[RMDB]
RNA sequence: GGGAACGACUCGAGUAGAGUCGAAAAGCAGUCCUGGGUUCUCUUAUCUUUUCUCUGAUAAAGAGGAGACCGCUGGACUCGCCGCCCCAGCCCGGGUAAGCCACAGUUCCGACCGAAGGGGACGAGUACGCUCACGAGUUCGCUCGUGAGAAAAGAAACAACAACAACAAC
Reactivity to 2A3 in 0.01 (KOAc 150mM, MgCl2 10mM, bicine 150mM(pH8.5), 24C), signal-to-noise 9, nucleotides 027 to 129: g010c020a000g000u000c000c000u020g030g000g030u230u070c000u000c000u040u100a130u050c000u020u080u090u020c230u060c100u220g110a190u160a190a040a010g010a010g000g000a010g010a010c000c060g040c130u040g000g000a000c000u010c030g010c000c000g020c000c000c010c010a060g010c000c010c010g010g000g000u020a030a020g030c030c010a070c000a070g030u090u030c030c020g020a040c030c000g020a060a020g010g000g000g000a000c010g000a000g030u060a040c080g000
Reactivity to DMS in 0.01 (KOAc 150mM, MgCl2 10mM, bicine 150mM(pH8.5), 24C), signal-to-noise 5, nucleotides 027 to 129: g000c070a050g000u020c010c040u010g010g000g040u060u030c010u020c020u000u070a130u030c020u010u000u010u020c100u020c170u000g030a110u070a050a070a000g000a110g020g030a040g020a030c000c000g000c090u030g010g020a040c010u010c090g080c000c000g030c090c010c010c010a120g020c020c010c010g030g000g030u040a050a070g040c010c050a100c120a100g000u000u000c050c050g000a080c060c040g010a060a080g000g060g000g020a010c000g000a050g000u000a080c120g020